[RMDB]
RNA sequence: GGGAACGACUCGAGUAGAGUCGAAAAGAUAUGGACGCUUCCUACCAGAGGUUACUCUUCGGAAACGAAGAGAACCGACGAAGGUAGGAGAGCGUCCUAAGUCAAACUGCACUGUUCGCAGUGCAGACUUAAUCACCGUGUUCGCACGGUGAUUAAGAAAAGAAACAACAACAACAAC
Reactivity to 2A3 in 0.01 (KOAc 150mM, MgCl2 10mM, bicine 150mM(pH8.5), 24C), signal-to-noise 3, nucleotides 027 to 126: g000a030u080a050u150g010g000a000c000g000c010u010u000c010c000u010a000c010c010a060g050a090g170g000u000u100a300c000u000c000u000u000c000g030g030a080a060a050c020g000a000a000g000a010g000a010a000c000c000g010a040c040g130a200a110g000g000u000a000g050g010a050g040a000g000c010g010u000c000c010u010a020a000g010u000c030a050a040a120c010u000g000c010a000c010u020g060u140u170c300g000c230a010g010u010g000c000a010g010a070
Reactivity to DMS in 0.01 (KOAc 150mM, MgCl2 10mM, bicine 150mM(pH8.5), 24C), signal-to-noise 4, nucleotides 027 to 126: g010a070u010a300u020g020g010a000c000g000c010u000u000c010c000u000a000c000c000a040g000a160g010g000u000u000a090c000u000c000u020u000c000g000g000a140a110a200c000g020a020a020g000a040g000a040a000c000c010g010a120c290g000a100a110g010g010u000a010g000g000a010g000a020g020c000g000u000c000c010u000a000a080g010u000c050a100a110a250c020u010g000c020a020c000u000g000u010u010c180g030c010a010g020u000g010c000a020g000a140
Conditions: 150 mM KOAc, 10 mM MgCl2 and 150 mM bicine (pH 8.5), 24 C. This 177-nucleotide RNA was probed chemically with 2A3 and DMS.